[RMDB]
RNA sequence: GGGAACGACUCGAGUAGAGUCGAAAAGUCUCACCGAAACUGGAGGAUCUUUCUAUCGAAAUGACAGACCUCACGGGCAGCUAUUCGGCCAUUGUUCUGCUGUAUGGAUGGAGGCGCAUCUACGAUGAUCAUGUAACAAUUUCGAUUGUUACAUGAUAAAAGAAACAACAACAACAAC
Reactivity to DMS in 0.01 (KOAc 150mM, MgCl2 10mM, bicine 150mM(pH8.5), 24C), signal-to-noise 9, nucleotides 027 to 126: g010u000c020u000c020a210c060c040g000a060a070a110c090u000g010g010a070g010g010a130u000c020u000u000u000c020u010a300u010c180g000a080a060a090u010g000a040c070a060g000a080c030c020u010c030a080c100g010g000g000c040a040g010c070u000a100u000u000c040g010g000c060c060a070u010u000g010u000u010c070u000g010c040u000g010u000a080u000g010g010a080u000g010g010a080g010g000c060g010c070a040u000c040u000a080c130g000a090u010g000
Reactivity to 2A3 in 0.01 (KOAc 150mM, MgCl2 10mM, bicine 150mM(pH8.5), 24C), signal-to-noise 9, nucleotides 027 to 126: g020u000c010u000c030a050c020c020g090a090a090a090c050u100g060g010a020g050g060a220u010c010u020u060u000c010u040a130u160c100g140a080a090a120u150g010a010c010a030g030a040c000c010u010c070a060c030g010g020g000c020a010g000c010u080a090u120u100c030g040g010c020c020a070u060u110g060u110u040c040u060g020c010u030g040u130a080u100g040g030a050u050g060g030a020g030g010c040g000c020a030u020c020u100a070c060g080a070u150g030

This 177-nucleotide RNA was probed chemically with DMS and 2A3.
Reactivities are given for positions 27 through 126.
The data come from the RNA Mapping Database (RMDB), library OK2TST.
The RNA was probed in 150 mM KOAc, 10 mM MgCl2 and 150 mM bicine (pH 8.5) at 24 C.